[RMDB]
RNA sequence: GGGAACGACUCGAGUAGAGUCGAAAAGGGGUCGGUUGAGAUAGCUGAAGCCCAGACAUGUUCUGAAGCCUCCACGGAACAACAGCUGGGAACUACUUCCGAAACAACCGACGGAGGCACCCAAAGCCCUCAGACAGGUUCGCCUGUCUGAGGGCAAGGCAAUCAAAUAGUUCGCUAUUUGAUUGCCAAAAGAAACAACAACAACAAC
Reactivity to 2A3 in 0.01 (KOAc 150mM, MgCl2 10mM, bicine 150mM(pH8.5), 24C), signal-to-noise 2, nucleotides 027 to 156: g060g000g040g010u030c040g020g030u030u010g080a210g040a220u180a090g080c170u150g020a020a000g030c030c010c010a010g010a050c050a100u160g000u010u000c020u050g030a110a000g010c030c010u030c010c000a010c020g000g000a000a000c000a050a030c050a080g140c000u000g000g000g020a050a000c050u170a050c000u150u010c040c040g080a130a110a010c010a000a000c010c010g000a000c000g000g000a000g000g000c000a000c000c000c000a100a010a050g010c010c010c050u020c000a010g000a000c000a010g070g080u140u130c210g130c070c000u000g000u000c000u000g000a000g000g000g000c000a000a000